[RMDB]
The record gives the reactivity of an RNA of 207 nucleotides to 2A3. Values cover nucleotides 27 to 156. 2A3 adducts were read by reverse transcription with SuperScript II with manganese. The RNA was probed in 150 mM KOAc, 10 mM MgCl2 and 150 mM bicine (pH 8.5) at 24 C. It was measured as part of the RMDB library VIROID.

RNA sequence: GGGAACGACUCGAGUAGAGUCGAAAAGUGUGAAGAAGGAGCCGUUCCACGCAGGACGCGAACAAGAAGAAACCGAAGCAACUUCAGGUCGCCGCGCACGAACUGGCGCUCGAUCUCCGCCUCGCUCGAGUAGGUUUCCCCGGGGAUCCCUCUUCGAGUUGUUACAAGAGUUCGCUCUUGUAACAACAAAAGAAACAACAACAACAAC
Reactivity to 2A3 in 0.01 (KOAc 150mM, MgCl2 10mM, bicine 150mM(pH8.5), 24C), signal-to-noise 2, nucleotides 027 to 156: g110u090g040u050g070a100a150g030a060a050g100g020a030g050c020c010g000u010u000c020c020a050c050g010c050a100g070g080a100c090g020c000g040a070a040c080a100a080g090a040a000g020a110a070a000c080c110g120a120a010g060c070a060a120c010u030u030c020a020g120g020u020c010g000c050c020g000c000g000c010a060c170g020a050a010c120u220g030g000c050g020c060u050c010g120a140u010c010u000c020c010g000c010c000u000c000g000c000u000c000g020a000g000u010a040g180g000u030u070u040c000c000c000c000g030g000g000g000a020u020c000c040c020u050c040u020u030c020g110a170